[RMDB]
RNA sequence: GGGAACGACUCGAGUAGAGUCGAAAAUUUGUAGAGUGGCUUUAUUAAAGGAAGUAAUUGAGAAAGAUGGAUUGUUGAAGCUAGAUGACAAAUUGAUUUGUGAGCUUGGUCAUUAUUGCUAUAAUAAGACUUCUUCCUUUUUCGAAAGGAAGAAGUCAAAAGAAACAACAACAACAAC
Reactivity to 2A3 in 0.01 (KOAc 150mM, MgCl2 10mM, bicine 150mM(pH8.5), 24C), signal-to-noise 5, nucleotides 027 to 126: u080u040u140g080u090a020g000a050g090u070g060g000c000u110u090u000a110u120u200a150a120a090g060g020a060a000g040u150a070a150u150u150g080a090g050a060a100a020g090a060u070g030g050a070u040u040g000u030u040g040a050a000g000c000u010a020g040a060u000g010a010c030a010a130a090u100u140g100a120u090u070u150g120u090g050a070g080c100u050u040g050g040u020c010a000u010u080a180u170u080g000c000u030a030u020a220a060u060a120a010
Reactivity to DMS in 0.01 (KOAc 150mM, MgCl2 10mM, bicine 150mM(pH8.5), 24C), signal-to-noise 2, nucleotides 027 to 126: u060u000u040g000u010a060g000a140g000u000g000g030c040u030u000u000a030u020u020a040a110a160g000g000a070a040g020u000a070a030u020u010g010a100g030a110a060a030g000a080u000g000g010a160u000u000g000u000u000g000a120a030g000c010u000a150g010a050u020g010a050c030a020a040a030u000u010g030a080u000u020u030g020u020g000a110g000c100u020u020g010g010u000c000a010u020u020a060u050u010g020c040u000a080u000a050a070u010a050a120
This 177-nucleotide RNA was probed chemically with 2A3 and DMS. High DMS reactivity at an A or C suggests that its Watson-Crick edge is free. Conditions: 150 mM KOAc, 10 mM MgCl2 and 150 mM bicine (pH 8.5), 24 C.